[RMDB]
RNA sequence: GGGAACGACUCGAGUAGAGUCGAAAAAACUCAGCUAGGGAGAGUAUAACAUUCAUGUUGACGAGACCUAGACGAAACACAGAGGAAAAUGAUUAAUCACUGGAUAGUAUUAGUAAUGACUCUGUGUAAAACUCUUCUACGUUCGCGUAGAAGAGAACGAUACUUAAACGUUCGCGUUUAAGUAUCGAAAAGAAACAACAACAACAAC
Reactivity to 2A3 in 0.01 (KOAc 150mM, MgCl2 10mM, bicine 150mM(pH8.5), 24C), signal-to-noise 8, nucleotides 027 to 156: a000a000c020u020c010a010g000c000u000a010g010g030g000a050g010a040g050u080a120u100a300a030c060a050u130u220c070a080u240g030u050u040g040a040c040g010a010g050a080c010c000u000a010g020a040c010g020a010a040a000c000a000c000a000g010a000g000g060a070a080a030a060u110g010a050u030u050a020a010u030c090a010c060u070g100g110a140u290a300g020u010a020u010u010a010g020u020a020a060u040g020a020c000u000c000u000g000u000g000u010a010a010a000a000c000u000c000u000u000c000u000a010c000g030u020u050c220g000c010g070u000a000g000a000a000g000a000g010a010a010
Reactivity to DMS in 0.01 (KOAc 150mM, MgCl2 10mM, bicine 150mM(pH8.5), 24C), signal-to-noise 4, nucleotides 027 to 156: a090a050c040u000c020a120g030c030u000a020g000g020g000a160g010a190g020u000a060u010a030a030c050a090u000u010c150a090u010g010u010u000g000a110c040g000a290g020a060c000c000u000a040g010a300c150g010a140a120a030c000a010c000a010g000a030g000g000a110a070a100a050u010g010a070u010u000a030a050u010c090a100c030u000g030g010a170u010a100g030u010a210u000u000a040g020u010a060a070u000g000a210c010u000c000u000g000u000g020u000a030a030a040a080c010u010c010u000u000c000u000a020c000g000u000u010c280g020c010g030u000a010g010a010a000g000a010g010a010a030